Annotation:
The data come from the RNA Mapping Database (RMDB), library OK3TST. An RNA of 207 nucleotides, treated with 2A3 and read out base by base. The 2A3 profile rests on 649 reads. The reactions ran in a buffer of 150 mM KOAc, 10 mM MgCl2 and 150 mM bicine (pH 8.5), at 24 C.
[RMDB]
RNA sequence: GGGAACGACUCGAGUAGAGUCGAAAACUCGACACCGCUGGCCCCACCGACACGACUACGGCAUGGGGCGCCAACUGGGACGCCGUCGGCCUCCUGGACGGCGAAGAGGGCUUCACUGAGUCCCGCGACCAGGACACCUCGGAACACUACGCAUGGGAGCGAAAGCGAUAUUCGUAUCGCUUUCGCUAAAAGAAACAACAACAACAAC
Reactivity to 2A3 in 0.01 (KOAc 150mM, MgCl2 10mM, bicine 150mM(pH8.5), 24C), signal-to-noise 1, nucleotides 027 to 156: c020u040c050g000a000c010a030c020c030g000c060u060g030g000c000c000c000c000a000c000c000g050a030c010a030c150g210a140c130u190a020c010g020g000c080a120u120g000g010g000g000c000g000c000c000a060a050c030u050g000g000g000a010c000g060c000c000g090u060c050g010g020c000c000u070c020c000u010g020g000a010c020g060g000c010g000a000a000g070a030g010g010g030c000u170u180c180a120c190u060g000a000g030u050c030c020c000g030c110g000a050c000c060a000g030g000a030c020a000c010c010u000c000g050g040a020a000c090a010c090u020a010c040g010c000a040u120g060g000g000